[RMDB]
RNA sequence: GGGAACGACUCGAGUAGAGUCGAAAAUGGUCUUCUCGCUCAGCGUGUUCCUGGCCCUGGGCAACAGCUUUUACUUUAUGGUGGGGGACAUGGUGCUGGGAGCCGUGAACCUCUUCCUCAUCCUGCCCAUCUUCUGGUACAUUCUGACGGAGGUGUGCGCGCCGUAUCAUUUCGAUGAUACGGCGCGAAAAGAAACAACAACAACAAC
Reactivity to 2A3 in 0.01 (KOAc 150mM, MgCl2 10mM, bicine 150mM(pH8.5), 24C), signal-to-noise 2, nucleotides 027 to 156: u140g010g010u030c010u050u000c060u070c030g000c100u010c010a050g020c010g000u020g020u030u020c000c030u030g070g010c020c040c090u030g000g000g040c010a010a010c040a030g100c020u070u160u230u300a110c060u080u150u150a080u250g020g010u010g010g000g000g010g080a030c030a030u030g010g000u130g000c120u220g030g150g000a050g000c000c000g000u010g010a040a080c000c010u000c000u000u150c010c020u090c030a160u060c000c050u060g020c000c000c010a090u130c010u100u070c070u060g060g000u040a010c000a020u040u050c040u070g010a000c010g040g000a020g050g000u080g020u030g070
Chemical mapping of a 207-nucleotide RNA with 2A3. The RNA was probed in 150 mM KOAc, 10 mM MgCl2 and 150 mM bicine (pH 8.5) at 24 C. For 2A3 the reverse transcriptase was SuperScript II with manganese.